An RNA of 177 nucleotides, treated with 2A3 and DMS and read out base by base. The 2A3 profile rests on 998 reads. 2A3 adducts were read by reverse transcription with SuperScript II with manganese. The RNA was probed in 150 mM KOAc, 10 mM MgCl2 and 150 mM bicine (pH 8.5) at 24 C.
RNA sequence: GGGAACGACUCGAGUAGAGUCGAAAACGAUGAACGUGCCGACGGCUACGUACCAGGCGACGGCGGUGGCCUCGUUCUGCUGAAGCCGGUGCAAGCUGCCCUGGACGACGGAGAUCGAAUCCACGCGGUGUGGAUAUGGCUUCGGCCAUAUCCACACAAAAGAAACAACAACAACAAC
Reactivity to 2A3 in 0.01 (KOAc 150mM, MgCl2 10mM, bicine 150mM(pH8.5), 24C), signal-to-noise 1, nucleotides 027 to 126: c040g010a050u020g120a080a000c000g040u030g040c010c020g060a100c070g010g000c030u080a030c090g040u030a050c070c020a110g000g000c020g030a020c010g030g010c010g090g020u110g040g040c010c060u060c040g050u120u020c040u050g000c040u050g010a040a020g000c000c000g030g000u000g000c000a010a010g000c040u020g050c050c040c080u120g020g010a040c120g060a030c010g110g020a020g000a090u030c000g010a040a010u000c000c030a090c040g090c110g000
Reactivity to DMS in 0.01 (KOAc 150mM, MgCl2 10mM, bicine 150mM(pH8.5), 24C), signal-to-noise 1, nucleotides 027 to 126: c070g010a020u000g000a050a240c080g030u000g020c010c040g010a130c030g000g000c080u030a150c130g020u000a100c020c000a180g030g010c030g000a230c050g010g000c000g010g000u020g000g000c040c080u010c040g000u040u040c060u030g030c000u000g000a060a300g070c040c010g000g000u000g000c010a120a050g000c030u010g060c010c000c110u000g010g000a110c110g000a130c010g010g000a160g000a040u000c030g010a170a160u010c020c000a080c180g010c190g010